[RMDB]
Description:
Conditions: 150 mM KOAc, 10 mM MgCl2 and 150 mM bicine (pH 8.5), 24 C. This 177-nucleotide RNA was probed chemically with 2A3 and DMS. For DMS the reverse transcriptase was MarathonRT. For DMS, 32,934 sequencing reads were counted. The data come from the RNA Mapping Database (RMDB), library OK1LIB. As a SHAPE reagent, 2A3 marks flexible, mostly unpaired nucleotides at the ribose 2'-OH.

RNA sequence: GGGAACGACUCGAGUAGAGUCGAAAACGUGGCCUCUUGCGAAAGACACGCAGUGCAAGAAACGUUAGAAAGACACGAAGCCCAGUGUAACAACGUGACACUUUCUUAGGAAAGUCGCAGGGCACGAAAUUAUUUAAUUAUUCGUAAUUAAAUAAUUAAAAGAAACAACAACAACAAC
Reactivity to 2A3 in 0.01 (KOAc 150mM, MgCl2 10mM, bicine 150mM(pH8.5), 24C), signal-to-noise 6, nucleotides 027 to 126: c020g010u050g140g120c010c010u050c050u090u050g010c020g060a140a050a030g120a060c040a010c080g110c080a060g060u040g080c020a040a030g020a110a100a000c010g010u020u020a070g100a090a120a010g100a020c010a000c040g070a050a020g060c000c020c010a020g010u020g020u060a130a080c060a040a020c030g030u040g050a010c000a010c050u030u040u030c000u040u070a090g010g130a040a020a010g010u030c010g010c040a020g000g010g010c010a000c010g000a010
Reactivity to DMS in 0.01 (KOAc 150mM, MgCl2 10mM, bicine 150mM(pH8.5), 24C), signal-to-noise 9, nucleotides 027 to 126: c040g010u010g010g010c040c020u020c050u020u010g000c010g010a080a120a080g000a140c080a050c060g010c130a100g010u010g010c070a090a080g010a080a140a050c030g000u010u010a070g010a090a090a070g000a060c030a020c010g010a120a150g010c020c020c020a150g010u000g000u010a060a090c120a050a060c030g000u010g010a160c120a100c010u000u000u000c000u010u050a130g010g000a020a010a010g010u000c080g020c060a050g000g000g010c000a030c020g000a090